Chemical mapping of a 177-nucleotide RNA with 2A3 and DMS.
RNA sequence: GGGAACGACUCGAGUAGAGUCGAAAACGAGUUCAUACGGCUAUCGUUGUUCAGGACCCCACCAUGCAGCGGCGCACGAUGGCGACGUUCCGCCGUAUGACUGGGGACAAUCCCGAUGCACCACGCACUUUUACUAAUCAUUCGUGAUUAGUAAAAGAAAAGAAACAACAACAACAAC
Reactivity to 2A3 in 0.01 (KOAc 150mM, MgCl2 10mM, bicine 150mM(pH8.5), 24C), signal-to-noise 9, nucleotides 027 to 126: c010g020a020g040u140u100c020a020u050a080c030g020g010c030u060a050u160c040g020u020u040g060u130u220c040a040g030g070a160c010c020c000c000a020c020c000a050u130g020c040a020g030c030g050g000c040g020c040a040c050g140a120u120g100g000c030g020a020c010g020u060u030c030c030g000c000c000g000u000a010u010g010a010c000u010g010g000g000g030a020c020a040a080u040c000c000c000g010a060u090g010c040a060c120c020a050c090g020c020a050
Reactivity to DMS in 0.01 (KOAc 150mM, MgCl2 10mM, bicine 150mM(pH8.5), 24C), signal-to-noise 9, nucleotides 027 to 126: c070g000a050g010u010u000c040a040u000a040c040g000g000c030u000a080u000c050g020u000u000g010u000u010c090a100g020g000a150c040c020c010c020a080c050c040a060u010g020c050a070g010c040g000g010c090g010c080a070c080g000a110u010g010g010c030g010a080c030g000u000u000c100c100g010c000c010g010u000a010u000g010a040c070u000g010g000g010g010a140c240a080a190u000c010c000c010g010a110u000g010c040a120c100c080a100c130g010c130a190